[RMDB]
Notes
This 207-nucleotide RNA was probed chemically with 2A3.

RNA sequence: GGGAACGACUCGAGUAGAGUCGAAAAGCGUACUACAAGCGUUGACACUUCUUGGAUUUACACAUCUCUAGCGUGAGGCUCCCAAAUAGGAGCCUUCGGGUGUGUUGUCAGAAGUGUACACGCUUGUAUCGCAAAGCGUUUGCUUCGGCAAACGCAAGAUAGUCUUGCAGUUCGCUGCAAGACUAUCAAAAGAAACAACAACAACAAC
Reactivity to 2A3 in 0.01 (KOAc 150mM, MgCl2 10mM, bicine 150mM(pH8.5), 24C), signal-to-noise 4, nucleotides 027 to 156: g000c000g030u110a110c060u010a000c020a020a000g000c010g080u100u200g040a010c010a000c000u020u000c010u090u170g250g010a110u280u300u170a020c020a000c000a020u050c090u000c080u180a060g140c040g140u190g090a000g010g000c000u040c000c000c010a110a230a090u300a090g010g000a000g000c000c000u010u020c030g010g000g000u000g010u000g000u000u000g000u000c000a000g000a000a000g000u000g000u000a060c000a000c000g000c000u000u010g000u000a000u030c010g000c000a010a080a030g000c010g000u010u000u000g000c010u000u090c210g070g000c000a020a000a000c000g000c000a000a000